This 207-nucleotide RNA was probed chemically with 2A3. 2A3 adducts were read by reverse transcription with SuperScript II with manganese. The RNA was probed in 150 mM KOAc, 10 mM MgCl2 and 150 mM bicine (pH 8.5) at 24 C. The 2A3 profile rests on 1,003 reads.

RNA sequence: GGGAACGACUCGAGUAGAGUCGAAAAUCCUAAGUCUUUCGGGACGUAUUGUCAGGCUAUGCUAAUACCGUAUCGGAAACGAUACGGGAUAACAUAGCCUUGGAUUUAUACGUUCUCUAGCGUGAAGAUAUGGAAAAGGCGAUCUUCGGAUCGCCAAUCAACUCCUUCUGUUCGCAGAAGGAGUUGAAAAAGAAACAACAACAACAAC
Reactivity to 2A3 in 0.01 (KOAc 150mM, MgCl2 10mM, bicine 150mM(pH8.5), 24C), signal-to-noise 2, nucleotides 027 to 156: u030c010c000u050a130a000g010u000c000u000u050u060c050g000g000g020a010c000g000u000a000u010u000g010u030c000a000g000g030c000u010a000u020g000c000u030a040a030u110a300c000c000g000u000a000u000c000g000g090a150a030a020c000g000a000u020a000c020g000g000g010a000u030a010a000c000a000u000a010g000c000c000u000u010g000g000a000u000u240u010a000u000a010c010g070u160u020c030u000c020u040a070g090c030g140u210g110a010a040g030a020u060a110u260g160g040a030a020a080a210g020g000c010g000a000u000c000u070u120c290g080g000a000u010c000g000c000c020a000a020